[RMDB]
The record gives the reactivity of an RNA of 177 nucleotides to DMS and 2A3. The reactions ran in a buffer of 150 mM KOAc, 10 mM MgCl2 and 150 mM bicine (pH 8.5), at 24 C. The 2A3 profile rests on 1,082 reads. 2A3 is a SHAPE reagent: it acylates the 2'-hydroxyl of flexible nucleotides of all four kinds. Source: RMDB library OK2TRN, as collected in RNAgym.
RNA sequence: GGGAACGACUCGAGUAGAGUCGAAAAACUCAGCAGCCACUGCCAUGAUGUGUCCAAUAGUCAAAGCAGUGCUCAAUGAAAUGGAAACUCAAAACAUUUUUGCCAUUUACAAGACGCAGGAAGAGGAAUAGCAUUACUCGUUCGCGAGUAAUGCUAUAAAAGAAACAACAACAACAAC
Reactivity to DMS in 0.01 (KOAc 150mM, MgCl2 10mM, bicine 150mM(pH8.5), 24C), signal-to-noise 3, nucleotides 027 to 126: a080c010u010c020a100g020c100a090g010c060c040a010c030u000g000c020c090a300u010g000a010u000g000u000g000u000c090c110a120a090u010a180g030u000c020a030a190a120g030c010a040g010u000g020c050u010c120a130a160u010g000a020a050a020u000g030g010a050a030a090c200u010c060a040a050a080a160c300a160u000u000u000u010u020g010c010c030a040u010u000u000a060c140a040a110g000a060c090g000c060a030g010g030a020a060g000a040g010g010a090
Reactivity to 2A3 in 0.01 (KOAc 150mM, MgCl2 10mM, bicine 150mM(pH8.5), 24C), signal-to-noise 2, nucleotides 027 to 126: a000c040u040c030a000g000c070a010g000c040c030a020c000u000g030c000c000a080u130g000a030u060g090u030g170u080c050c000a060a090u070a130g090u000c010a170a000a000g000c010a030g030u020g080c010u040c050a080a160u160g060a030a000a020u060g010g070a110a050a100c070u110c190a060a130a010a110c060a200u060u070u120u090u260g080c000c000a050u120u060u040a140c030a060a030g040a020c010g000c070a040g080g000a040a040g060a020g030g100a060